[RMDB]
RNA sequence: GGGAACGACUCGAGUAGAGUCGAAAAUAAAAAGGGACGAGCAGCAGGCGAGGAACCCAAGCAGCUGUCCCGGGUGCCAUCGCCCUACGUGAGGACACCAGGCGUGGAUAGCACCAGGCCUAAAAAACAUUUAGUAAACGUUCGCGUUUACUAAAUGAAAAGAAACAACAACAACAAC
Reactivity to DMS in 0.01 (KOAc 150mM, MgCl2 10mM, bicine 150mM(pH8.5), 24C), signal-to-noise 4, nucleotides 027 to 126: u010a040a060a060a070a130g010g000g000a020c000g010a070g030c010a060g030c040a140g010g020c020g000a110g010g000a140a060c030c000c040a110a150g010c020a070g020c040u010g000u000c010c010c010g010g010g010u000g000c020c020a040u000c020g010c000c020c050u000a050c200g000u000g000a180g020g010a140c030a030c030c070a040g000g000c070g020u000g000g010a070u000a070g010c080a060c020c010a070g020g010c000c010u000a000a040a060a100a060a070
Reactivity to 2A3 in 0.01 (KOAc 150mM, MgCl2 10mM, bicine 150mM(pH8.5), 24C), signal-to-noise 2, nucleotides 027 to 126: u110a010a050a000a010a020g050g000g030a010c140g090a040g010c020a000g010c000a000g040g000c040g040a070g070g070a060a050c000c010c030a020a030g000c010a000g030c020u030g000u020c010c010c000g000g000g010u000g000c010c010a080u030c020g010c000c000c020u050a040c030g060u070g060a140g120g140a080c010a020c030c020a010g010g020c080g040u040g080g020a070u040a040g000c000a010c000c010a010g080g020c010c020u090a140a110a010a000a010a010